[RMDB]
RNA sequence: GGGAACGACUCGAGUAGAGUCGAAAAAGUGCUGGGAUUACAGGCAUGAGCCACUGCACCCGGCCUGCAGUACACUUUUAUACAUGGAAAUCUGAAGUGUGAAAGAGCUGUGCCAAGAGAAUGAGGAGGAUUUCCAGUGAGAGGCACGAAUAUGUGACCCCGGUAUGAUGUUCGCAUCAUACCGGGGAAAAGAAACAACAACAACAAC
Reactivity to 2A3 in 0.01 (KOAc 150mM, MgCl2 10mM, bicine 150mM(pH8.5), 24C), signal-to-noise 1, nucleotides 027 to 156: a050g200u260g050c050u080g150g040g000a130u130u050a180c130a050g000g000c030a000u030g220a010g020c000c000a060c110u000g010c000a040c000c000c010g060g000c000c000u010g020c020a000g070u100a000c030a000c000u090u170u040u210a240u070a270c180a060u080g000g060a000a000a190u050c060u100g010a010a000g010u030g000u000g080a080a020a000g070a030g030c000u000g030u030g030c000c000a080a030g050a020g060a130a070u030g010a030g130g020a010g030g000a020u020u130u000c000c000a000g020u080g100a030g030a040g040g030c030a020c080g100a130a070u150a030u060g020u000g060a070

Chemical mapping of a 207-nucleotide RNA with 2A3. Source: RMDB library OK3TST, as collected in RNAgym. The reactions ran in a buffer of 150 mM KOAc, 10 mM MgCl2 and 150 mM bicine (pH 8.5), at 24 C. For 2A3, 379 sequencing reads were counted.